[RMDB]
RNA sequence: GGGAACGACUCGAGUAGAGUCGAAAACUGCACUGGAUGUAGAGAGUGGCAAGCGUAUGGAUUGACAGACUUGAGUUGCAAGGUGGGUUGCAUUCAGUCUUGUAGACAACAGUCGAGAAUCUGUCUGAGAUGCCUGUGUAUUCGUACACAGGCAUCUAAAAGAAACAACAACAACAAC
Reactivity to DMS in 0.01 (KOAc 150mM, MgCl2 10mM, bicine 150mM(pH8.5), 24C), signal-to-noise 3, nucleotides 027 to 126: c060u010g020c040a080c050u020g010g020a170u010g000u010a100g010a170g000a050g030u000g010g010c030a050a060g000c030g030u000a050u000g000g000a120u000u010g010a060c100a110g000a030c020u000u000g000a180g020u000u010g020c060a030a050g000g000u000g000g000g010u010u000g000c070a010u010u000c010a050g000u000c010u000u010g020u010a120g010a040c050a070a210c160a050g000u000c040g000a130g000a090a060u010c040u000g000u010c030u010g010
Reactivity to 2A3 in 0.01 (KOAc 150mM, MgCl2 10mM, bicine 150mM(pH8.5), 24C), signal-to-noise 2, nucleotides 027 to 126: c010u080g010c050a020c070u080g080g080a090u080g060u080a050g030a020g020a000g180u070g020g000c020a040a000g010c020g070u140a060u130g050g010a040u010u070g040a060c040a040g010a000c010u090u200g010a000g080u020u040g050c010a000a050g050g050u070g040g000g070u070u070g020c060a050u010u030c010a020g050u010c020u030u080g010u030a090g010a050c020a040a030c000a050g070u000c020g010a010g000a020a050u020c010u020g080u000c010u090g040
Overview
An RNA of 177 nucleotides, treated with DMS and 2A3 and read out base by base. For 2A3, 1,810 sequencing reads were counted. Values are in units of 0.01, from 0 to 300, in steps of 10.